[RMDB]
RNA sequence: GGGAACGACUCGAGUAGAGUCGAAAAAGCUGACGGACGCCGGCCGGGCCGUGGCACAGCCUCUGCUGCUGGCAGAACAGGACCGCCUCCGGGCAGAACAGCGUGCGGCAGAAGUCGUCGUACUGCCCACCGGAAAAAUGUUCGCAUUUUUCCGGUGAAAAGAAACAACAACAACAAC
Reactivity to DMS in 0.01 (KOAc 150mM, MgCl2 10mM, bicine 150mM(pH8.5), 24C), signal-to-noise 2, nucleotides 027 to 126: a130g000c020u010g000a040c000g010g020a100c110g040c100c040g030g030c060c090g010g000g000c030c030g030u000g000g010c050a090c180a160g010c050c030u010c040u000g010c030u000g020c090u010g000g030c010a050g000a090a130c110a080g010g000a070c050c070g030c100c040u010c060c050g000g000g020c010a030g010a090a100c110a080g000c060g040u000g020c040g000g000c010a060g010a110a080g010u000c070g000u000c050g020u000a080c030u010g000c010c030
Reactivity to 2A3 in 0.01 (KOAc 150mM, MgCl2 10mM, bicine 150mM(pH8.5), 24C), signal-to-noise 1, nucleotides 027 to 126: a000g040c040u010g010a010c040g040g030a000c020g000c040c030g020g000c000c010g040g020g000c000c000g010u010g020g000c030a030c040a150g060c010c020u040c060u090g030c040u050g010c020u070g060g000c000a020g030a070a040c060a050g070g080a090c020c020g020c010c010u000c010c000g030g000g030c020a010g030a110a030c020a030g020c000g100u110g010c000g010g000c020a030g070a300a020g070u030c010g030u000c010g010u040a040c020u020g000c020c010
An RNA of 177 nucleotides, treated with DMS and 2A3 and read out base by base. Source: RMDB library OK2TST, as collected in RNAgym. 2A3 adducts were read by reverse transcription with SuperScript II with manganese. High 2A3 reactivity points to a flexible backbone, as in loops and unpaired stretches.